This 177-nucleotide RNA was probed chemically with DMS. The RNA was probed in 150 mM KOAc, 10 mM MgCl2 and 150 mM bicine (pH 8.5) at 24 C. DMS adducts were read by reverse transcription with MarathonRT. Values cover nucleotides 27 to 126. It was measured as part of the RMDB library OK2TRN.
RNA sequence: GGGAACGACUCGAGUAGAGUCGAAAAUCUGAUUGUAGGGGCUUCCCACAUCCCCCAGGAUGGCUGCCCUCUGCUGUGGCAUCACUGUGUAACAAUGGCGUGUACACCUCUCUGUCCCCACCAGUGCGACCAUUUGCUGUUUCGACAGCAAAUGGUCAAAAGAAACAACAACAACAAC
Reactivity to DMS in 0.01 (KOAc 150mM, MgCl2 10mM, bicine 150mM(pH8.5), 24C), signal-to-noise 1, nucleotides 027 to 126: u010c050u000g000a170u010u020g020u010a080g020g010g000g020c190u000u000c000c020c000a190c070a060u000c050c010c050c070c130a160g020g000a040u000g010g010c130u010g030c010c010c040u000c030u010g030c050u000g050u020g000g010c070a080u010c040a060c080u000g000u000g010u010a080a040c110a030a020u020g010g030c090g000u010g060u000a050c120a060c020c020u020c020u000c020u010g000u000c060c000c010c100a150c080c050a050g020u010g010c170